[RMDB]
Source: RMDB library OK2TRN, as collected in RNAgym. Structure probing data (DMS and 2A3) for a 177-nucleotide construct. The RNA was probed in 150 mM KOAc, 10 mM MgCl2 and 150 mM bicine (pH 8.5) at 24 C. DMS adducts were read by reverse transcription with MarathonRT. For 2A3, 1,220 sequencing reads were counted. For DMS, 1,312 sequencing reads were counted. As a SHAPE reagent, 2A3 marks flexible, mostly unpaired nucleotides at the ribose 2'-OH.
RNA sequence: GGGAACGACUCGAGUAGAGUCGAAAAAAUCUUGGCUCUUGUCACAGAUGCUAGUGUGGAGCAAUCAAGCAAAUUGUUGACCUUGCUGGGAACACUCUCCCCACACCAAAGUCAGGGAGCUUUGGGAGUUAUUGCCAUUCUUCGGAAUGGCAAUAACAAAAGAAACAACAACAACAAC
Reactivity to DMS in 0.01 (KOAc 150mM, MgCl2 10mM, bicine 150mM(pH8.5), 24C), signal-to-noise 2, nucleotides 027 to 126: a060a040u000c000u000u000g000g020c020u000c110u000u020g020u010c070a050c070a050g030a210u000g000c020u000a060g030u020g010u010g020g010a110g020c080a110a040u000c050a090a050g030c120a030a030a180u000u000g010u000u000g000a070c090c100u000u000g000c040u000g020g000g010a030a050c060a090c120u000c080u000c000c000c000c040a150c150a090c020c000a020a020a040g020u000c070a210g020g010g020a140g000c030u000u000u000g000g020g000a070
Reactivity to 2A3 in 0.01 (KOAc 150mM, MgCl2 10mM, bicine 150mM(pH8.5), 24C), signal-to-noise 2, nucleotides 027 to 126: a000a000u050c040u010u020g010g000c010u060c000u130u100g070u050c010a060c000a060g080a120u050g040c050u070a060g030u010g020u060g180g110a070g040c060a000a080u140c030a060a010g030c020a020a110a230u180u090g120u080u060g030a040c010c010u040u040g000c010u060g080g020g020a080a000c050a020c040u040c000u040c010c000c000c000a010c010a010c000c020a040a010a010g000u030c070a100g220g110g010a060g020c000u000u020u010g010g000g000a160